[RMDB]
RNA sequence: GGGAACGACUCGAGUAGAGUCGAAAAUGCCACCCAUCGCAUGCCUGUAGCUGAAACUCUGUGAAAUAAUUGUACAACGGCAAGUGCGGUGCCGCGAUCGACGGAUAUGACAAGGCACAGAUGUUGAUAUUAAAUAUGUCUGGCUGCUUUUCGGCCAUGAUUUCAUUCCGUUCGCGGAAUGAAAUCAAAAAGAAACAACAACAACAAC
Reactivity to 2A3 in 0.01 (KOAc 150mM, MgCl2 10mM, bicine 150mM(pH8.5), 24C), signal-to-noise 2, nucleotides 027 to 156: u080g070c000c010a060c050c000c030a070u050c030g010c010a010u100g000c000c050u100g030u080a040g020c080u070g080a100a100a040c020u040c060u150g060u170g080a130a050a000u180a050a100u220u130g020u060a060c140a090a030c070g000g010c040a080a060g030u010g060c020g050g020u050g010c020c000g070c030g120a160u140c090g050a070c020g020g020a000u020a110u170g110a110c040a070a090g000g060c020a000c010a050g020a060u060g040u130u080g010a040u030a050u100u300a110a050a120u210a010u110g070u010c040u010g020g020c040u000g040c000u100u100u040u110c030g010g000c040c000a030

Description: Structure probing data (2A3) for a 207-nucleotide construct. The RNA was probed in 150 mM KOAc, 10 mM MgCl2 and 150 mM bicine (pH 8.5) at 24 C. The data come from the RNA Mapping Database (RMDB), library OK3TST. For 2A3 the reverse transcriptase was SuperScript II with manganese.